[RMDB]
RNA sequence: GGGAACGACUCGAGUAGAGUCGAAAAGGACAAGUGCAAGAACAAUGAGAACCUGCAGCAGAUCCUCACCAAUGCCACCAUCAUGGUCGUCAGCGUCACCGCCUCCACCACCCAGGGGCAGCAGCUGCUAACACCGAUUUUUCGAAAUCGGUGUUAGAAAAGAAACAACAACAACAAC
Reactivity to DMS in 0.01 (KOAc 150mM, MgCl2 10mM, bicine 150mM(pH8.5), 24C), signal-to-noise 5, nucleotides 027 to 126: g010g010a050c080a090a070g010u000g010c030a030a090g000a050a110c060a130a110u040g020a130g020a090a140c050c000u010g010c070a040g010c080a090g010a070u010c020c010u020c050a110c050c020a070a100u000g000c030c030a080c040c050a050u000c090a070u010g000g020u020c080g000u010c020a040g020c050g000u010c060a070c050c030g000c040c000u000c020c040a090c050c040a060c040c000c020a090g020g000g000g030c030a050g010c090a060g000c040u030g000
Reactivity to 2A3 in 0.01 (KOAc 150mM, MgCl2 10mM, bicine 150mM(pH8.5), 24C), signal-to-noise 8, nucleotides 027 to 126: g080g020a030c080a110a050g060u040g080c030a040a060g060a180a040c060a110a140u200g030a060g010a130a040c010c010u020g020c030a040g020c000a010g020a150u030c000c010u030c000a050c020c030a020a040u100g030c030c000a020c030c000a040u120c040a060u110g040g010u030c010g050u030c030a020g010c010g080u070c020a010c040c030g010c010c010u010c000c010a030c020c000a030c000c010c000a010g010g010g010g020c000a010g010c020a000g010c010u050g020
An RNA of 177 nucleotides, treated with DMS and 2A3 and read out base by base. The 2A3 profile rests on 10,235 reads. It was measured as part of the RMDB library OK1LIB. Conditions: 150 mM KOAc, 10 mM MgCl2 and 150 mM bicine (pH 8.5), 24 C.